Notes
This 207-nucleotide RNA was probed chemically with 2A3. It was measured as part of the RMDB library M2RFPK.
RNA sequence: GGGAACGACUCGAGUAGAGUCGAAAAUCAUCAAGAAGUAGGCUUAGGCCAAUUGUUUGGUGGUGAAAGUAGAGGGAAGGUAGCACUUCGACGCCUCUAAGUACGCUGUGGGAGUAGUGCUUAAAUCAAAAGCACAGCGACUUCGGUCGCUGUGCAAGCUAUCUUGUGGCUUCGGCCACAAGAUAGCAAAAGAAACAACAACAACAAC
Reactivity to 2A3 in 0.01 (KOAc 150mM, MgCl2 10mM, bicine 150mM(pH8.5), 24C), signal-to-noise 1, nucleotides 027 to 156: u020c010a010u000c000a030a030g040a110a010g090u140a030g030g000c010u070u090a090g140g000c050c010a100a040u110u030g130u020u000u030g010g000u010g000g050u050g000a030a060a000g100u050a010g000a020g000g000g000a010a010g060g000u090a010g040c030a000c060u000u000c010g070a100c060g040c000c000u030c010u010a090a090g110u050a040c030g000c030u000g000u080g030g040g050a030g010u080a020g010u020g010c020u030u140a040a070a110u150c050a040a120a000a000g000c000a000c000a000g000c000g000a010c000u020u050c140g100g000u010c020g010c010u000g000u000g010c010a000a000